RNA sequence: GGGAACGACUCGAGUAGAGUCGAAAAAUUCAAGCGCACAGUUGGCGAGAUCGAGGGCUUCAUCAAGGCCGGUGACACCGCAGGCGCGCUGAACCUCGCAUCCAAAGUAUUCGGCACCAAGGGAGCCACCCAGUUCAUCGGCGCGCUGCAGUCCGGCGUAACACGUAGUGUUCGCACUACGUGUUACAAAAGAAACAACAACAACAAC
Reactivity to DMS in 0.01 (KOAc 150mM, MgCl2 10mM, bicine 150mM(pH8.5), 24C), signal-to-noise 2, nucleotides 027 to 156: a130u000u020c050a070a090g030c050g030c020a100c050a120g030u000u000g000g000c090g010a090g000a040u010c000g010a130g010g020g000c060u000u020c060a120u000c080a080a170g010g010c020c020g000g010u010g000a170c060a150c030c050g030c060a160g000g010c010g030c040g020c010u020g010a070a070c040c000u000c010g050c070a150u030c040c020a020a140a100g020u010a140u010u000c000g030g010c050a080c020c040a070a160g010g000g000a130g000c040c020a040c040c030c030a130g000u000u000c040a120u000c040g020g020c020g000c000g020c000u000g020c010a110g010u000c010c000g010g040c170
Reactivity to 2A3 in 0.01 (KOAc 150mM, MgCl2 10mM, bicine 150mM(pH8.5), 24C), signal-to-noise 3, nucleotides 027 to 156: a010u120u070c050a050a040g020c000g010c010a020c030a120g070u070u100g070g000c040g010a010g000a030u080c060g010a060g010g040g020c030u100u070c070a130u090c100a180a080g080g010c030c000g000g010u060g050a060c060a030c100c060g020c010a020g100g000c000g000c000g000c010u020g010a040a050c000c010u030c060g020c040a060u040c040c040a080a050a030g020u060a160u100u150c050g040g000c040a030c020c030a090a090g130g010g000a000g010c010c000a030c000c010c000a040g060u100u110c060a050u040c070g010g010c000g000c000g000c000u020g000c010a020g010u020c000c000g010g010c030
About this RNA:
An RNA of 207 nucleotides, treated with DMS and 2A3 and read out base by base. The data come from the RNA Mapping Database (RMDB), library OK3TST.